[RMDB]
RNA sequence: GGGAACGACUCGAGUAGAGUCGAAAAGUGCAGAGUGAAAUUCAUAGGUGCAUCGCCAAUUUGGCGGAACGACCCGGUACUCCGCGUAGUCGCGAUGUAAACGUUCGGUGUUGGCGUUCAGGCCUCAACUAGUCAUGGCAUUCGUGCCAUGACUAGUAAAAGAAACAACAACAACAAC
Reactivity to DMS in 0.01 (KOAc 150mM, MgCl2 10mM, bicine 150mM(pH8.5), 24C), signal-to-noise 2, nucleotides 027 to 126: g030u000g000c040a010g000a130g000u000g020a040a090a080u030u030c080a150u030a050g020g000u000g020c010a030u000c000g000c000c050a130a150u020u010u030g060g020c000g020g030a040a030c030g010a100c040c020c000g000g020u000a100c120u010c070c030g030c010g050u010a050g000u010c160g000c020g000a030u000g010u030a060a060a130c060g000u000u010c010g000g010u020g030u010u020g000g020c060g030u000u030c060a090g000g000c010c010u020c090a180
Reactivity to 2A3 in 0.01 (KOAc 150mM, MgCl2 10mM, bicine 150mM(pH8.5), 24C), signal-to-noise 1, nucleotides 027 to 126: g160u200g000c010a050g130a020g020u090g030a000a170a120u250u150c170a080u160a090g160g000u000g000c000a020u010c000g000c000c010a110a080u070u100u220g270g000c030g000g050a010a010c020g050a000c020c000c010g000g000u080a060c030u100c000c010g000c000g050u020a000g060u070c000g000c010g000a000u000g040u150a040a080a030c040g000u000u000c000g000g020u020g050u000u140g040g000c000g000u050u020c040a030g020g050c000c000u000c000a030